[RMDB]
RNA sequence: GGGAACGACUCGAGUAGAGUCGAAAAGAGGACGGCAGAGGCUGUAUCCGGUCUGCAAACACGACAGGGCUGGAAUGUCACCUGGAGUGGACUACUGGCUGUCUCCGGAGUAGGACGUCCGAAGAGAGGGUUCCAGCUCGUUCGCGAGUUGGAACCCAAAAGAAACAACAACAACAAC
Reactivity to DMS in 0.01 (KOAc 150mM, MgCl2 10mM, bicine 150mM(pH8.5), 24C), signal-to-noise 2, nucleotides 027 to 126: g000a180g000g010a000c070g000g000c090a160g000a030g000g040c080u000g030u030a170u000c030c000g020g000u000c060u000g000c130a090a030a160c040a030c100g000a190c000a030g000g000g020c040u010g000g000a040a100u010g000u000c040a300c060c000u000g010g000a100g020u070g000g000a100c040u000a080c020u000g040g000c060u070g000u010c000u000c000c040g000g000a100g040u020a110g000g000a140c040g000u000c000c000g000a120a140g010a110g000a240
Reactivity to 2A3 in 0.01 (KOAc 150mM, MgCl2 10mM, bicine 150mM(pH8.5), 24C), signal-to-noise 1, nucleotides 027 to 126: g180a070g000g020a000c010g000g000c040a010g000a000g210g000c000u010g000u050a160u020c000c010g000g030u070c100u070g000c000a000a130a000c030a000c080g070a000c000a010g020g000g010c020u090g030g280a170a040u110g110u080c010a030c130c000u000g050g000a030g000u050g000g000a030c050u060a030c040u020g120g050c020u000g050u040c010u040c050c010g050g040a020g020u100a020g110g000a010c000g000u000c000c030g000a010a000g090a000g070a020